[RMDB]
RNA sequence: GGGAACGACUCGAGUAGAGUCGAAAAAUCAGCCUUCGUUCUGUAAACGGGGUUGGAUGCGACUCUCAUAGGCUCUCCAACCCAACUCCUACUCAAUACGUCCUCGUCGUACAGAACGGUAACAUGUAAAACGAAGGCUGCUUCGGCAGCCUUCGAAUCGAUAUGUUAUGUUCGCAUAACAUAUCGAAAAAGAAACAACAACAACAAC
Reactivity to DMS in 0.01 (KOAc 150mM, MgCl2 10mM, bicine 150mM(pH8.5), 24C), signal-to-noise 2, nucleotides 027 to 156: a110u020c000a110g010c030c030u010u000c010g010u000u000c000u000g020u000a070a100a060c050g030g010g010g000u000u000g010g040a040u000g030c080g010a070c010u010c080u000c120a160u010a090g050g010c030u000c000u000c010c030a080a090c030c010c000a080a040c060u000c030c000u010a060c070u010c020a080a100u000a090c070g000u000c010c010u000c000g030u000c050g000u010a090c020a030g010a040a050c000g010g000u000a070a080c080a100u010g020u000a030a070a080a260c000g000a030a000g000g000c000u030g010c010u000u020c290g040g000c000a020g010c000c010u000u000c000g010a030a040
Reactivity to 2A3 in 0.01 (KOAc 150mM, MgCl2 10mM, bicine 150mM(pH8.5), 24C), signal-to-noise 3, nucleotides 027 to 156: a000u090c040a030g050c010c010u040u080c010g040u000u010c020u010g020u020a050a010a060c050g000g010g000g000u000u000g010g000a030u050g010c030g140a160c050u070c030u030c220a170u200a130g040g040c030u020c000u010c040c010a020a020c020c010c010a020a050c030u050c010c020u040a070c040u050c090a090a120u090a220c060g070u080c030c040u070c060g070u030c020g000u020a020c010a000g010a000a010c020g010g000u080a060a030c030a080u130g090u170a070a080a000a030c010g010a000a000g010g000c000u000g000c000u020u020c050g130g000c000a000g000c000c040u010u000c000g000a010a010